[RMDB]
This 177-nucleotide RNA was probed chemically with 2A3 and DMS.
The 2A3 profile rests on 1,028 reads.
For DMS, 682 sequencing reads were counted.
The data come from the RNA Mapping Database (RMDB), library RFMREP.
2A3 adducts were read by reverse transcription with SuperScript II with manganese.
The reactions ran in a buffer of 150 mM KOAc, 10 mM MgCl2 and 150 mM bicine (pH 8.5), at 24 C.

RNA sequence: GGGAACGACUCGAGUAGAGUCGAAAAGCCUCACAAGGACAUUCAUGGCAACCGUAAUUCAUCCUCGCCCUCUGAUGAACUUGCUGGGCAGGAAGCAUCAGUAUGAGUAACAGGCAGAUCUUAAUGUGCCGUAUAGUAUGUUCGCAUACUAUACGGCAAAAGAAACAACAACAACAAC
Reactivity to 2A3 in 0.01 (KOAc 150mM, MgCl2 10mM, bicine 150mM(pH8.5), 24C), signal-to-noise 1, nucleotides 027 to 126: g000c000c020u000c000a070c020a040a020g040g000a030c000a040u040u010c030a030u070g010g000c020a040a050c010c030g050u080a040a120u120u150c050a020u060c020c010u020c130g070c010c000c000u000c050u000g030a010u060g020a020a040c010u030u050g000c070u050g030g000g050c000a020g060g210a020a030g040c000a000u020c030a010g070u080a070u120g060a030g000u040a060a040c020a020g000g000c030a010g030a090u060c020u010u150a190a130u150g060u040
Reactivity to DMS in 0.01 (KOAc 150mM, MgCl2 10mM, bicine 150mM(pH8.5), 24C), signal-to-noise 1, nucleotides 027 to 126: g000c050c000u000c140a160c100a050a070g000g000a210c040a040u000u010c120a030u000g000g010c050a090a070c170c060g010u010a040a120u010u010c070a120u000c020c020u010c300g000c050c000c030u000c040u040g010a040u000g000a060a120c110u000u000g070c040u000g000g010g040c040a030g020g080a090a070g000c090a020u010c040a040g000u000a030u010g020a040g020u010a010a060c200a050g000g000c090a040g010a080u010c050u010u010a090a100u000g050u010

As a SHAPE reagent, 2A3 marks flexible, mostly unpaired nucleotides at the ribose 2'-OH.